This 207-nucleotide RNA was probed chemically with 2A3 and DMS. Reactivities are rounded to 0.1 and cut off at 0 and 3. The reactions ran in a buffer of 150 mM KOAc, 10 mM MgCl2 and 150 mM bicine (pH 8.5), at 24 C. It was measured as part of the RMDB library M2RFPK. DMS adducts were read by reverse transcription with MarathonRT.

RNA sequence: GGGAACGACUCGAGUAGAGUCGAAAAGCUAUUGUUGGAAUCACCGUACCUAUUUAGGUUUACGCUCCAAGAUCGGUGGAUAGCAGCCCUAUCAAUAUCUAGGAGAACUGAGCUAUGUUUAGAAGAUUAAAUCGACGCAUCUUCGGAUGCGUCGAAACAAAAUUACAUCCUUCGGGAUGUAAUUUUGAAAAGAAACAACAACAACAAC
Reactivity to 2A3 in 0.01 (KOAc 150mM, MgCl2 10mM, bicine 150mM(pH8.5), 24C), signal-to-noise 4, nucleotides 027 to 156: g010c010u010a010u020u120g140u140u160g160g050a140a110u160c010a010c000c000g010u030a020c010c000u080a160u210u210u280a040g000g000u050u040u050a020c020g000c010u000c010c000a010a010g010a020u030c010g000g000u010g050g010a010u010a000g010c030a010g010c000c000c020u050a090u150c070a100a020u010a010u130c020u010a010g000g000a010g000a040a060c080u110g040a050g060c050u130a100u230g100u060u120u080a140g030a220a030g010a090u150u200a110a110a090u030c000g000a000c000g000c000a000u000c000u030u040c160g070g000a010u000g000c020g000u000c000g000a010a000a000
Reactivity to DMS in 0.01 (KOAc 150mM, MgCl2 10mM, bicine 150mM(pH8.5), 24C), signal-to-noise 3, nucleotides 027 to 156: g020c010u000a030u000u000g010u000u020g000g000a160a170u000c030a040c030c010g030u000a070c020c000u000a140u000u000u010a030g020g000u000u000u000a050c060g010c040u000c030c020a090a100g020a070u000c070g050g060u010g020g010a070u000a050g020c050a240g000c100c070c020u000a140u010c040a060a110u010a080u000c070u000a100g010g010a090g020a080a100c050u000g010a150g010c040u000a070u010g010u000u000u010a110g000a080a150g010a200u000u000a030a090a140u000c000g020a030c010g000c000a010u000c000u000u000c300g030g030a030u000g020c000g010u000c000g000a000a010a100